[RMDB]
RNA sequence: GGGAACGACUCGAGUAGAGUCGAAAAGUCUAGACAUGCAGUAGCCAUGUAGGUACAGUACGUACGCACUCUAGCGAUCAGACUCUAGUGAUCACCAUGGUACCAUGCGACUGUACUCUAGUAUGAGGUGCGGAGCAAAGUUCGCUUUGCUCCGCACAAAAGAAACAACAACAACAAC
Reactivity to DMS in 0.01 (KOAc 150mM, MgCl2 10mM, bicine 150mM(pH8.5), 24C), signal-to-noise 3, nucleotides 027 to 126: g000u000c030u000a060g000a170c060a050u010g010c050a140g010u010a120g020c080c080a040u020g020u000a060g020g030u000a020c020a070g020u000a110c100g020u000a110c170g020c090a030c080u010c080u000a060g010c020g010a030u010c050a060g010a110c170u000c140u010a110g010u000g000a030u000c040a050c050c020a030u000g000g000u000a050c030c060a060u010g000c020g010a060c050u000g000u000a050c090u000c040u000a030g010u000a070u000g000a090g000
Reactivity to 2A3 in 0.01 (KOAc 150mM, MgCl2 10mM, bicine 150mM(pH8.5), 24C), signal-to-noise 2, nucleotides 027 to 126: g020u010c030u020a020g000a050c000a040u050g040c070a060g080u150a020g140c110c040a050u060g010u090a080g110g000u000a000c010a030g070u060a070c080g000u020a020c070g020c030a040c020u060c010u020a010g000c020g070a070u080c040a040g150a270c020u030c060u170a070g070u030g050a030u040c030a020c040c020a020u070g050g000u050a070c020c030a030u100g030c030g000a030c000u030g030u000a010c010u000c030u110a040g050u050a080u160g110a060g040
Source: RMDB library OK2TRN, as collected in RNAgym. Structure probing data (DMS and 2A3) for a 177-nucleotide construct. Values cover nucleotides 27 to 126. 2A3 adducts were read by reverse transcription with SuperScript II with manganese. DMS adducts were read by reverse transcription with MarathonRT. The reactions ran in a buffer of 150 mM KOAc, 10 mM MgCl2 and 150 mM bicine (pH 8.5), at 24 C.